[RMDB]
RNA sequence: GGGAACGACUCGAGUAGAGUCGAAAAUCACAAAUUAUUAACUGUCGCUUAUCAUUAUCGUCACACAGAUGUCGCUAUGACUGCUAAAAAAGCAAUUGAAGCAGGUGUGGUUGGUAAACCAUUAGUAAUUUGACCGUGAUUUCGAUCACGGUCAAAUAAAAGAAACAACAACAACAAC
Reactivity to 2A3 in 0.01 (KOAc 150mM, MgCl2 10mM, bicine 150mM(pH8.5), 24C), signal-to-noise 3, nucleotides 027 to 126: u080c030a040c030a060a120a040u180u150a060u050u080a090a020c090u040g070u090c070g010c010u030u020a030u120c080a060u020u060a040u090c060g040u040c000a000c000a000c050a010g080a280u050g080u160c010g010c050u050a050u210g050a040c030u000g000c010u080a000a000a000a000a000a280g060c040a000a080u080u130g100a110a010g010c000a030g000g020u000g000u000g000g100u110u180g000g030u030a020a060a050c000c000a050u000u010a050g050u100a130
Reactivity to DMS in 0.01 (KOAc 150mM, MgCl2 10mM, bicine 150mM(pH8.5), 24C), signal-to-noise 2, nucleotides 027 to 126: u020c000a070c110a100a050a010u040u080a090u000u000a060a070c080u020g010u000c090g000c010u000u000a070u010c070a150u030u010a040u010c100g000u000c000a010c040a050c000a080g030a030u010g010u030c050g000c080u020a070u000g000a070c050u000g000c000u020a000a020a090a110a030a040g000c060a050a010u000u020g000a140a040g010c040a100g000g000u020g030u000g000g000u010u050g000g010u020a010a010a140c030c060a090u000u000a060g000u000a070